Chemical mapping of a 177-nucleotide RNA with DMS and 2A3. 2A3 is a SHAPE reagent: it acylates the 2'-hydroxyl of flexible nucleotides of all four kinds. Values cover nucleotides 27 to 126. DMS adducts were read by reverse transcription with MarathonRT. The RNA was probed in 150 mM KOAc, 10 mM MgCl2 and 150 mM bicine (pH 8.5) at 24 C. Source: RMDB library OK1LIB, as collected in RNAgym. For 2A3, 4,042 sequencing reads were counted.
RNA sequence: GGGAACGACUCGAGUAGAGUCGAAAAGAGAACAGAUGCACGAUCGCGAUGAGGCGAGAGCGGUUGUGUCGAAUUCUCAGGCGAAGGUGUCAUGGUGAGAGUCUUCCCAGUUCAGGACGCGGCCAGCGCAGUGGCAUCCUUUCGAGGAUGCCACUGCAAAAGAAACAACAACAACAAC
Reactivity to DMS in 0.01 (KOAc 150mM, MgCl2 10mM, bicine 150mM(pH8.5), 24C), signal-to-noise 2, nucleotides 027 to 126: g000a060g000a060a010c200a130g020a210u030g000c010a000c030g000a010u010c000g020c010g000a170u030g010a090g010g040c060g000a010g050a300g000c010g010g020u000u010g010u010g030u010c010g030a090a180u000u000c000u000c000a140g010g000c060g010a110a010g000g000u010g000u000c000a070u010g030g000u030g000a100g000a080g030u000c020u000u040c000c000c020a080g000u030u000c070a090g040g000a080c070g010c010g000g000c000c040a090g000c190
Reactivity to 2A3 in 0.01 (KOAc 150mM, MgCl2 10mM, bicine 150mM(pH8.5), 24C), signal-to-noise 4, nucleotides 027 to 126: g020a000g020a040a030c040a090g060a120u160g010c010a000c020g010a020u000c000g000c010g080a120u130g080a070g110g080c080g050a080g000a020g080c010g030g010u030u000g010u000g020u070c010g020a020a060u070u000c030u000c000a010g030g010c050g080a070a030g040g040u090g050u100c020a060u110g130g000u080g080a130g010a010g030u000c000u010u010c000c000c010a000g030u060u100c030a040g010g010a020c010g020c000g070g020c030c000a040g040c040